[RMDB]
Conditions: 150 mM KOAc, 10 mM MgCl2 and 150 mM bicine (pH 8.5), 24 C. An RNA of 207 nucleotides, treated with DMS and 2A3 and read out base by base. The 2A3 profile rests on 7,818 reads. For 2A3 the reverse transcriptase was SuperScript II with manganese.
RNA sequence: GGGAACGACUCGAGUAGAGUCGAAAAGAUUACCUUAUCCCAGGGCUUGGCGCAGCAGGAAAGAUGAUGGUAGGUUCGCUUGCUGAUGCCUCGAAUCAACGAGGCGAUUUUGCCCAGAACGCUGCGACAAAUGCUGGGGUUAACCUUGCCGCGCAAGCAACAACGUAUAAUUCGUUAUACGUUGUUGAAAAGAAACAACAACAACAAC
Reactivity to DMS in 0.01 (KOAc 150mM, MgCl2 10mM, bicine 150mM(pH8.5), 24C), signal-to-noise 3, nucleotides 027 to 156: g000a260u000u010a160c060c040u000u010a050u000c000c010c000a150g020g010g000c060u000u000g020g010c020g050c020a050g000c020a170g010g020a080a130a110g020a080u000g020a120u000g020g030u000a070g010g000u000u010c070g010c040u000u000g010c000u000g030a070u010g030c060c050u000c100g000a100a130u000c220a110a170c030g020a040g020g010c000g020a060u000u000u000u000g000c000c050c040a150g010a080a150c110g010c020u010g010c000g000a060c030a040a030a070u000g010c030u000g010g010g000g010u000u000a030a070c030c040u000u010g020c000c040g000c050g000c060a100a170g010
Reactivity to 2A3 in 0.01 (KOAc 150mM, MgCl2 10mM, bicine 150mM(pH8.5), 24C), signal-to-noise 7, nucleotides 027 to 156: g050a020u130u170a140c020c010u060u070a040u040c000c000c000a000g030g040g000c020u010u010g010g020c010g000c010a010g000c030a040g070g090a110a080a050g120a090u210g020a050u150g030g070u080a040g020g030u040u060c100g020c120u050u100g000c030u060g030a060u140g010c010c010u010c010g030a040a100u110c020a040a140c020g020a010g010g020c010g030a040u020u040u060u180g020c030c020c000a020g020a090a010c070g000c010u000g000c000g020a020c010a010a040a010u120g050c020u050g000g000g000g010u020u060a020a010c000c000u010u020g020c050c080g100c060g000c050a030a000g010